RNA sequence: GGGAACGACUCGAGUAGAGUCGAAAACCGGCACUUUAAUCUCGGUUGAUCCAAUUUUAACUGGCGAAAAUAACUACGCUCUCGCUGCUUAAUCGAAGCACAGUAGAUUGAAGCUUAAUCCUUACACAAGGUGUUUGGACGAGACAUCACCCGGAAGCAUCCAUACUUGCUUCGGCAAGUAUGGAUGAAAAGAAACAACAACAACAAC
Reactivity to 2A3 in 0.01 (KOAc 150mM, MgCl2 10mM, bicine 150mM(pH8.5), 24C), signal-to-noise 2, nucleotides 027 to 156: c010c000g000g070c100a060c100u220u280u190a170a160u140c010u050c030g050g000u000u030g020a040u060c040c060a100a120u090u130u100u220a130a110c060u050g020g000c020g040a040a090a090a150u220a120a050c140u150a030c060g000c030u000c000u000c000g030c080u010g000c000u020u010a020a010u000c040g020a030a000g100c190a080c120a250g010u020a000g000a020u020u050g190a000a000g000c000u000u000a000a020u020c000c000u030u010a030c010a010c060a120a040g140g020u010g000u040u050u000g010g000a000c000g000a000g020a030c010a010u000c000a010c000c000c010g020g090a000a010g050